Source: RMDB library OK2TST, as collected in RNAgym. Chemical mapping of a 177-nucleotide RNA with 2A3 and DMS. Reactivities are given for positions 27 through 126.
RNA sequence: GGGAACGACUCGAGUAGAGUCGAAAAGUCGCUAUUGCGAUGAGGACAUAGACGAAUGCUCACUGAGUUCACCCUGUCGGAAUGGAGCUAGCUGUUUGAAUGUUCCCGGAUCGUAUAGGUGCCUCUGCGGAUCAACGAAUUUCGAUUCGUUGAUCCGAAAAGAAACAACAACAACAAC
Reactivity to 2A3 in 0.01 (KOAc 150mM, MgCl2 10mM, bicine 150mM(pH8.5), 24C), signal-to-noise 2, nucleotides 027 to 126: g050u040c000g020c070u130a130u120u300g030c000g030a020u030g020a050g050g000a020c010a040u070a060g040a000c050g050a110a070u080g020c010u030c010a100c070u100g030a000g050u010u050c040a110c030c030c030u120g100u130c070g000g090a060a120u170g050g010a020g000c000u010a000g020c060u070g030u050u140u080g170a220a070u090g020u000u070c030c000c000g020g070a030u040c030g000u070a070u070a130g050g030u030g000c010c000u030c000u040g050
Reactivity to DMS in 0.01 (KOAc 150mM, MgCl2 10mM, bicine 150mM(pH8.5), 24C), signal-to-noise 2, nucleotides 027 to 126: g060u000c010g010c010u010a150u000u000g040c010g000a030u010g010a090g000g000a070c090a090u000a080g000a040c070g010a120a170u010g010c000u000c030a120c080u000g010a070g000u000u000c060a110c030c070c070u000g000u000c110g020g010a050a080u010g000g000a040g010c050u010a080g020c030u010g000u010u000u040g000a090a130u000g020u000u010c010c020c000g010g010a100u000c050g020u010a050u020a020g010g020u000g020c000c060u010c080u000g010
For 2A3 the reverse transcriptase was SuperScript II with manganese. The RNA was probed in 150 mM KOAc, 10 mM MgCl2 and 150 mM bicine (pH 8.5) at 24 C.